[RMDB]
RNA sequence: GGGAACGACUCGAGUAGAGUCGAAAACGCGUCCUGUUCGCAGGACGCGAAUUAAGGAAACCUUCCUGGUGGCGAGAAUAAAUGAGCACUCGCGCUCAUAUAAUAGGUGGGCGUUCGCGCCCACCAACAGUAGAUAGGAUUUCGAUCCUAUCUACUGAAAAGAAACAACAACAACAAC
Reactivity to DMS in 0.01 (KOAc 150mM, MgCl2 10mM, bicine 150mM(pH8.5), 24C), signal-to-noise 6, nucleotides 027 to 126: c020g030c020g010u010c000c000u000g010u000u010c170g030c000a030g000g000a020c020g020c000g000a000a010u000u010a120a080g010g000a080a110a120c070c050u000u000c020c010u010g010g010u000g010g020c030g000a070g010a110a080u010a060a090a050u010g000a030g000c030a110c120u000c100g010c080g000c000u000c010a060u000a050u000a080a100u000a100g020g020u000g010g000g020c010g040u000u010c180g010c010g000c000c000c000a000c000c010a010a030
Reactivity to 2A3 in 0.01 (KOAc 150mM, MgCl2 10mM, bicine 150mM(pH8.5), 24C), signal-to-noise 5, nucleotides 027 to 126: c000g000c000g000u000c000c000u030g030u050u070c270g020c070a020g000g010a010c000g000c000g000a000a000u090u040a050a010g060g010a060a080a040c010c010u050u030c010c020u080g060g030u080g100g030c030g010a030g050a120a130u130a190a160a080u120g020a020g020c030a030c080u070c050g040c040g000c010u010c030a080u170a020u040a170a140u120a110g010g000u010g000g000g010c030g020u040u060c200g030c000g000c010c000c000a000c000c000a000a000